[RMDB]
RNA sequence: GGGAACGACUCGAGUAGAGUCGAAAAUAAACAAUAUGAAAAGUAUACGUUCAUAGAUGAGAUAGCAAGAGUAAAUGGUGGUGAUUUAAUUAAAGCAUAUUCUUUAUAUCAUACAAAAGUUGAUGAUACUGACACAUAUAAAGGCAUGAUUAUGUCAACGUAAUCCACUGUUCGCAGUGGAUUACGUAAAAGAAACAACAACAACAAC
Reactivity to 2A3 in 0.01 (KOAc 150mM, MgCl2 10mM, bicine 150mM(pH8.5), 24C), signal-to-noise 1, nucleotides 027 to 156: u180a000a010a000c030a080a100u150a080u300g210a030a040a000a000g030u030a050u040a110c010g040u000u040c030a010u010a040g120a150u070g010a030g100a040u140a010g000c030a080a020g010a000g040u080a000a000a070u110g010g000u010g000g030u040g090a060u110u000u050a070a060u070u040a100a010a000g020c000a000u000a060u110u050c010u090u050u000a080u030a030u100c000a010u010a150c010a050a230a050a020g060u070u090g000a070u010g060a030u030a030c000u030g040a010c000a000c030a070u040a040u070a120a040a030g030g000c070a010u040g040a180u260u040a030u150g030u060c030a010